[RMDB]
RNA sequence: GGGAACGACUCGAGUAGAGUCGAAAAUUAAUUCGUUCUGGCGUUGCUGCCAGCUCUGCGCUUCUUGCUGACGUGUCGCCAACCAGCUCUCUUCUUCAUCUUCCUGUGGCAAUGUCAGUGCAUAACCUGAACGUAGGCAUUUCGAUGCCUACGUUCAAAAAGAAACAACAACAACAAC
Reactivity to 2A3 in 0.01 (KOAc 150mM, MgCl2 10mM, bicine 150mM(pH8.5), 24C), signal-to-noise 1, nucleotides 027 to 126: u140u030a050a100u130u060c090g000u070u030c000u020g000g050c000g050u030u110g080c060u060g010c020c000a000g000c020u010c030u040g020c020g000c020u050u040c020u020u220g000c020u050g000a060c040g060u050g030u100c020g000c040c000a050a110c010c000a030g000c000u000c020u000c010u080u020c030u080u050c030a120u010c020u040u020c000c010u020g020u050g060g000c000a030a020u040g020u040c000a030g020u020g000c000a020u030a110a140c020c020
Reactivity to DMS in 0.01 (KOAc 150mM, MgCl2 10mM, bicine 150mM(pH8.5), 24C), signal-to-noise 1, nucleotides 027 to 126: u000u010a040a090u020u000c110g020u020u000c020u010g020g000c050g010u000u020g000c070u020g040c020c040a070g010c180u000c040u040g030c060g010c050u000u000c050u000u010g010c030u000g000a070c080g020u000g000u000c060g000c010c040a060a080c090c070a110g000c020u000c030u000c030u000u000c030u000u010c050a050u010c080u000u000c020c020u000g060u020g000g010c020a030a020u010g000u000c030a070g030u000g000c060a060u010a050a120c090c050
Background
Conditions: 150 mM KOAc, 10 mM MgCl2 and 150 mM bicine (pH 8.5), 24 C. The record gives the reactivity of an RNA of 177 nucleotides to 2A3 and DMS.